[RMDB]
RNA sequence: GGGAACGACUCGAGUAGAGUCGAAAAGUGAGUUCUAUUCAGCAAUGGAUAGUAUUUACGAAGUCAUGUAAAUCGUAAUAUCUAGAGGAAGGUGAAGUCGUAACAAGGUUUCCGUAGGUGAACCUGCUCUUAUAGGAGGUUUCGACCUCCUAUAAGAAAAAGAAACAACAACAACAAC
Reactivity to 2A3 in 0.01 (KOAc 150mM, MgCl2 10mM, bicine 150mM(pH8.5), 24C), signal-to-noise 8, nucleotides 027 to 126: g080u060g010a010g020u050u010c010u000a010u010u000c010a010g020c050a060a130u030g010g000a000u020a000g020u020a050u010u030u010a010c020g010a030a000g110u090c060a090u160g100u300a020a030a090u050c020g010u020a040a040u050a100u170c060u060a040g020a020g080g020a110a040g030g020u060g040a060a020g050u050c020g000u050a040a050c050a090a070g060g000u020u070u020c010c020g060u070a030g010g060u090g070a060a070c000c000u000g000c000
Reactivity to DMS in 0.01 (KOAc 150mM, MgCl2 10mM, bicine 150mM(pH8.5), 24C), signal-to-noise 9, nucleotides 027 to 126: g010u010g010a060g020u010u000c010u000a010u000u000c010a020g010c270a110a100u010g010g010a020u000a010g010u010a040u010u000u000a010c010g010a070a090g010u010c070a070u020g000u020a050a160a110u000c030g010u010a060a080u030a080u020c090u010a090g010a050g010g000a180a060g000g010u000g000a040a040g010u000c040g010u000a040a050c180a070a080g010g010u000u000u000c020c020g030u010a040g000g020u020g000a050a060c020c010u000g000c080

Structure probing data (2A3 and DMS) for a 177-nucleotide construct. Source: RMDB libraries RFM100 and RFMREP, as collected in RNAgym. The RNA was probed in 150 mM KOAc, 10 mM MgCl2 and 150 mM bicine (pH 8.5) at 24 C. For 2A3 the reverse transcriptase was SuperScript II with manganese. Reactivities are rounded to 0.1 and cut off at 0 and 3.